[RMDB]
RNA sequence: GGGAACGACUCGAGUAGAGUCGAAAACGAGUCGAACGAUGUCGAUCCGGCGUCUAUUCAGACUGAAGUAUUCCGUCUGCCUUCGACCUGCUUUGCCGAAGAAGAUGGUUCUAUCGCUAACUCCGGAAGCAUCCCAGGGAUUCGUCCCUGGGAUGCUAAAAGAAACAACAACAACAAC
Reactivity to 2A3 in 0.01 (KOAc 150mM, MgCl2 10mM, bicine 150mM(pH8.5), 24C), signal-to-noise 1, nucleotides 027 to 126: c050g010a020g000u020c000g020a060a020c030g050a010u120g020u040c010g030a160u040c030c090g000g000c000g000u000c040u100a130u090u100c130a100g000a030c020u050g050a020a000g020u010a110u080u030c010c000g010u060c000u030g080c080c000u010u010c000g050a020c040c030u120g050c030u260u260u280g000c010c020g000a000a000g050a000a010g060a010u050g050g010u030u000c000u030a160u040c050g000c120u040a090a030c000u000c020c040g050g050a050
Reactivity to DMS in 0.01 (KOAc 150mM, MgCl2 10mM, bicine 150mM(pH8.5), 24C), signal-to-noise 1, nucleotides 027 to 126: c010g000a000g000u030c000g010a010a280c300g000a070u000g000u000c020g000a070u000c100c120g010g000c030g020u030c030u040a250u010u010c070a100g000a030c060u000g050a070a160g000u000a040u000u000c020c010g030u000c010u000g000c300c010u000u000c000g020a020c010c220u020g040c120u010u000u000g000c040c000g000a030a040g000a300a010g000a030u000g000g000u000u000c010u000a070u010c160g000c120u000a060a060c140u000c030c040g040g000a130
Chemical mapping of a 177-nucleotide RNA with 2A3 and DMS.
The data come from the RNA Mapping Database (RMDB), library OK2TST.
The DMS profile rests on 695 reads.
Reactivities are given for positions 27 through 126.
The reactions ran in a buffer of 150 mM KOAc, 10 mM MgCl2 and 150 mM bicine (pH 8.5), at 24 C.